This 177-nucleotide RNA was probed chemically with 2A3 and DMS.

[RMDB]
RNA sequence: GGGAACGACUCGAGUAGAGUCGAAAAGUCGUGGUACCGCAGCUAGCCUAGAGACGCGAUACACGUGCGUGGAGAUGCGUCCCGCGGAGACCAGCUUUACCGUGCUUCGGGGAGGUUGUAAGUGGGCGUAAUUGUAGAACUUCGGUUCUACAAUUACAAAAGAAACAACAACAACAAC
Reactivity to 2A3 in 0.01 (KOAc 150mM, MgCl2 10mM, bicine 150mM(pH8.5), 24C), signal-to-noise 5, nucleotides 027 to 126: g050u050c050g070u040g020g020u030a040c010c020g010c000a030g000c030u100a030g040c000c050u070a080g020a010g000a090c010g000c020g030a030u070a120c040a010c050g180u270g180c130g030u050g030g040a110g010a050u190g000c000g030u040c010c000c020g030c000g000g010a110g040a030c010c010a010g010c000u080u050u040a090c010c020g010u060g050c010u120u130c030g020g010g000g000a050g030g010u050u050g030u090a140a100g020u100g020g030g000c020
Reactivity to DMS in 0.01 (KOAc 150mM, MgCl2 10mM, bicine 150mM(pH8.5), 24C), signal-to-noise 7, nucleotides 027 to 126: g010u000c040g020u010g010g020u000a060c040c030g020c040a110g010c090u000a100g010c060c050u000a120g010a090g000a030c030g010c020g010a130u010a060c030a030c030g020u010g020c160g020u000g010g000a100g000a150u010g000c030g000u000c000c010c030g010c070g000g000a150g000a060c050c010a050g000c040u000u010u000a100c060c030g010u000g000c080u000u000c050g010g000g000g010a080g000g000u000u010g000u000a070a080g010u010g000g010g010c130
It was measured as part of the RMDB library OK2TST. Conditions: 150 mM KOAc, 10 mM MgCl2 and 150 mM bicine (pH 8.5), 24 C.